An RNA of 177 nucleotides, treated with 2A3 and DMS and read out base by base. It was measured as part of the RMDB library 15KREP. DMS (dimethyl sulfate) methylates the pairing face of unpaired adenines and cytosines. The RNA was probed in 150 mM KOAc, 10 mM MgCl2 and 150 mM bicine (pH 8.5) at 24 C.
[RMDB]
RNA sequence: GGGAACGACUCGAGUAGAGUCGAAAACUCUAGAUUCCGAUAGAGAAUCGAGAGAAAACUGGCUCUCCCUUAGCCAUCCGAGUGGACGCGCGUCCUCCUUCGGAUGCCCAGGUCGGACCGCGAGGAGCAUUGCUGCAUUGUUCGCAAUGCAGCAAUGAAAAGAAACAACAACAACAAC
Reactivity to 2A3 in 0.01 (KOAc 150mM, MgCl2 10mM, bicine 150mM(pH8.5), 24C), signal-to-noise 2, nucleotides 027 to 126: c000u000c000u020a000g010a030u000u000c020c050g170a230u160a180g230a040g020a050a000u010c010g000a000g010a000g010a030a070a010a020c060u040g010g010c000u000c010u010c050c020c000u060u080a020g010c010c010a010u000c010c000g010a020g030u040g010g000a010c020g100c030g030c110g150u000c000c000u000c020c050u080u060c010g000g010a000u010g000c030c000c000a030g010g020u030c010g020g020a030c010c010g030c020g050a110g080g040a040g020
Reactivity to DMS in 0.01 (KOAc 150mM, MgCl2 10mM, bicine 150mM(pH8.5), 24C), signal-to-noise 2, nucleotides 027 to 126: c000u010c000u000a090g000a010u020u000c000c020g020a240u000a180g030a170g010a010a000u000c000g010a040g010a000g000a130a040a100a120c170u030g030g000c020u010c020u000c010c030c050u010u000a060g000c180c010a010u010c000c000g000a070g020u000g010g000a020c040g030c290g020c200g010u010c020c030u000c060c070u010u000c020g000g010a020u000g010c100c070c050a080g000g030u000c040g000g010a160c020c050g000c070g000a050g000g000a170g020